[RMDB]
Background
An RNA of 207 nucleotides, treated with DMS and 2A3 and read out base by base. Values cover nucleotides 27 to 156. For DMS, 3,175 sequencing reads were counted. DMS adducts were read by reverse transcription with MarathonRT.
RNA sequence: GGGAACGACUCGAGUAGAGUCGAAAACUGUGCCUUCGGGCACAGGAUUAAUUUAAACUGGUGGGGCAGUGUCUAGGAUUGACGUUAGACACUGCUUUUUGCCCGUUUCAAACAGGUGAAUACAAACCGUCAUGUAGAGGCCGCGUUCGCGCGGCAACCCUGUCAUAUAGUUCGCUAUAUGACAGGGAAAAGAAACAACAACAACAAC
Reactivity to DMS in 0.01 (KOAc 150mM, MgCl2 10mM, bicine 150mM(pH8.5), 24C), signal-to-noise 2, nucleotides 027 to 156: c000u000g010u000g010c000c010u000u000c300g040g020g000c000a010c000a000g000g020a140u000u010a050a100u010u000u010a070a060a150c050u010g020g010u010g010g000g010g050c000a010g040u000g000u020c000u000a010g010g000a300u000u010g010a240c190g000u000u000a010g000a000c010a020c000u000g010c010u000u000u000u000u000g020c000c000c060g000u000u000u000c180a110a030a050c060a090g030g020u000g010a100a080u020a280c040a060a070a080c010c010g000u000c040a140u000g030u010a170g000a140g030g010c020c010g010c000g020u000u000c210g040c050g080c000g030g020c000a000a030
Reactivity to 2A3 in 0.01 (KOAc 150mM, MgCl2 10mM, bicine 150mM(pH8.5), 24C), signal-to-noise 2, nucleotides 027 to 156: c000u000g000u000g000c000c000u010u060c230g020g010g030c010a000c000a000g020g000a000u020u070a030a080u070u000u070a050a050a040c010u010g000g040u010g030g030g010g000c000a000g000u000g000u010c010u010a020g050g200a220u060u140g120a090c070g010u050u020a010g000a000c000a000c000u000g040c000u000u000u000u000u010g000c000c000c000g000u010u000u090c200a080a080a050c020a060g000g010u050g030a050a020u110a070c030a060a090a010c010c040g030u040c040a040u060g020u060a000g010a060g140g050c000c000g020c020g040u010u070c190g000c000g000c000g050g010c000a010a000